[RMDB]
RNA sequence: GGGAACGACUCGAGUAGAGUCGAAAAAAAAGAUAUGGACGGACCUCCCCACCUCCCGAGAACGUUGAAAGUCCGUCGGAAACGACGGACUGGAGUUCGGCGGAGAGGGUCCGUCCUAAGUCAAAAACUACCCAUAAUACUUCGGUAUUAUGGGUAGAAAAGAAACAACAACAACAAC
Reactivity to DMS in 0.01 (KOAc 150mM, MgCl2 10mM, bicine 150mM(pH8.5), 24C), signal-to-noise 3, nucleotides 027 to 126: a070a070a120a110g000a020u000a050u000g000g000a020c000g000g000a030c010c010u000c070c010c000c030a300c040c000u000c000c010c010g000a160g000a020a010c010g010u020u030g000a140a080a040g010u000c000c010g020u010c000g000g000a020a010a050c000g030a020c000g000g000a020c010u000g000g000a020g010u000u000c000g000g170c300g000g000a020g010a070g030g010g000u010c000c000g000u000c000c000u000a000a030g010u020c030a120a080a120a130a110

Notes: An RNA of 177 nucleotides, treated with DMS and read out base by base. DMS (dimethyl sulfate) methylates the pairing face of unpaired adenines and cytosines.